Notes: Structure probing data (2A3 and DMS) for a 170-nucleotide construct. The reactions ran in a buffer of 150 mM KOAc, 10 mM MgCl2 and 150 mM bicine (pH 8.5), at 24 C.
RNA sequence: GGGAACGACUCGAGUAGAGUCGAAAAGUUCUCCUCGCAUCGGACUGGCUCAUUCUCGGAGAGGGCGGACGGUCCUGAGAACUCUUAUCUUCCUGCUUAGAAGAGGAGUCUCCUGGACGCUUCCGCCAAAGCUGUUCGUUCGCGAACAGCAAAAGAAACAACAACAACAAC
Reactivity to 2A3 in 0.01 (KOAc 150mM, MgCl2 10mM, bicine 150mM(pH8.5), 24C), signal-to-noise 5, nucleotides 027 to 129: g010u020u010c030u020c000c010u010c020g030c010a100u050c020g000g030a050c030u040g040g000c020u010c040a110u150u030c060u020c070g050g010a100g020a040g050g030g000c010g000g010a010c030g020g010u000c000c000u040g010a050g010a090a040c000u000c000u060u130a110u080c000u020u010c020c060u090g140c110u170u290a040g000a030a000g000a010g010g000a000g010u000c020u000c020c070u040g000g000a000c020g030c110u010u000c000c000g000c000c020a010a010a000
Reactivity to DMS in 0.01 (KOAc 150mM, MgCl2 10mM, bicine 150mM(pH8.5), 24C), signal-to-noise 3, nucleotides 027 to 129: g030u000u000c010u010c000c030u010c030g000c060a050u020c000g020g020a040c060u050g030g030c030u030c040a020u000u000c080u030c020g040g020a100g000a170g040g000g000c020g030g020a040c060g000g000u010c020c000u050g010a050g020a080a100c010u020c000u010u080a130u020c020u060u000c030c130u000g000c180u020u030a160g010a020a040g000a040g000g000a000g010u000c000u020c020c080u030g000g000a040c000g000c030u030u030c030c040g040c000c020a010a020a040